Conditions: 150 mM KOAc, 10 mM MgCl2 and 150 mM bicine (pH 8.5), 24 C. Structure probing data (2A3) for a 177-nucleotide construct.

RNA sequence: GGGAACGACUCGAGUAGAGUCGAAAAGGCGACGGCGUUCGUGUCGCCGUCGAAAGUGCCGUCGAUGGCCGACGCCGCCGAACUCGCCGCGGAGCUGCACAGCUACCCCGACAUCGAGUUCUCCGCGCCGCUAUGCCGCAUUCGUGCGGCAUAGCGGAAAAGAAACAACAACAACAAC
Reactivity to 2A3 in 0.01 (KOAc 150mM, MgCl2 10mM, bicine 150mM(pH8.5), 24C), signal-to-noise 1, nucleotides 027 to 126: g030g000c010g000a000c000g030g030c000g040u040u270c120g000u060g010u090c030g020c050c000g000u030c000g000a000a010a000g090u120g070c010c000g060u010c030g000a050u050g070g060c120c080g000a000c020g000c000c000g000c000c000g020a120a080c050u000c000g080c000c000g000c000g020g000a000g020c000u120g080c030a090c010a100g000c000u290a300c000c000c000c000g000a010c000a040u070c030g000a010g040u090u010c030u000c000c000g020c020g000